[RMDB]
RNA sequence: GGGAACGACUCGAGUAGAGUCGAAAAGAUAUGGAGAUAGGGUGAGCUCGAUGAAAGUAUUCGGAAACGAAUACUGGAGAGCCACCUAUCUCCUAAGUCAAAAGCUUCUUACUUCGGUAAGAAGCAAGAAUAACCAUAUCUUCGGAUAUGGUUAUUCAAAAGAAACAACAACAACAAC
Reactivity to DMS in 0.01 (KOAc 150mM, MgCl2 10mM, bicine 150mM(pH8.5), 24C), signal-to-noise 7, nucleotides 027 to 126: g010a040u000a300u000g000g010a000g010a010u000a000g000g020g010u000g010a180g040c000u000c010g000a150u030g000a210a100a010g000u000a010u000u000c000g000g000a140a120a180c000g010a020a010u000a000c000u000g000g000a060g010a010g010c000c020a020c000c000u000a000u000c000u000c000c000u000a000a050g000u000c040a120a090a190a130g000c000u000u000c000u000u000a010c000u000u010c200g020g010u000a000a000g000a010a010g010c000a010a030
Reactivity to 2A3 in 0.01 (KOAc 150mM, MgCl2 10mM, bicine 150mM(pH8.5), 24C), signal-to-noise 4, nucleotides 027 to 126: g030a020u070a050u140g000g010a000g010a010u030a050g210g140g090u110g060a200g010c010u020c030g300a300u050g010a030a010a000g000u000a000u000u000c000g020g020a060a080a060c020g000a000a000u010a000c000u010g000g010a010g000a000g010c010c000a000c000c000u000a000u010c000u020c000c000u000a000a010g010u000c010a010a000a060a110g000c000u000u000c010u010u000a010c000u030u110c300g120g000u000a000a000g000a000a000g000c000a000a000